RNA sequence: GGGAACGACUCGAGUAGAGUCGAAAACCAUCCCCUCCCAUUCGCUAGAAUGUUGCAGGUGGAGAUUUCGCUCUUAUGUUUUCUCGAUGCCUCCCAUUCCUAUCGUUCUUGGAACUUCCUUCCUCUUACAUCUGCGUUAGUUCGCUAACGCAGAUGUAAAAGAAACAACAACAACAAC
Reactivity to 2A3 in 0.01 (KOAc 150mM, MgCl2 10mM, bicine 150mM(pH8.5), 24C), signal-to-noise 1, nucleotides 027 to 126: c030c000a050u010c000c000c000c000u000c030c000c000a050u020u050c030g020c030u050a070g020a050a010u040g020u160u060g120c100a000g000g050u180g040g050a010g000a020u020u040u070c030g020c030u010c010u100u060a080u230g160u020u130u110u040c000u000c020g050a040u060g000c000c000u000c020c020c000a010u040u040c000c000u080a080u090c030g040u070u020c000u060u000g090g010a070a060c000u050u060c000c010u010u010c030c020u020c020u000u000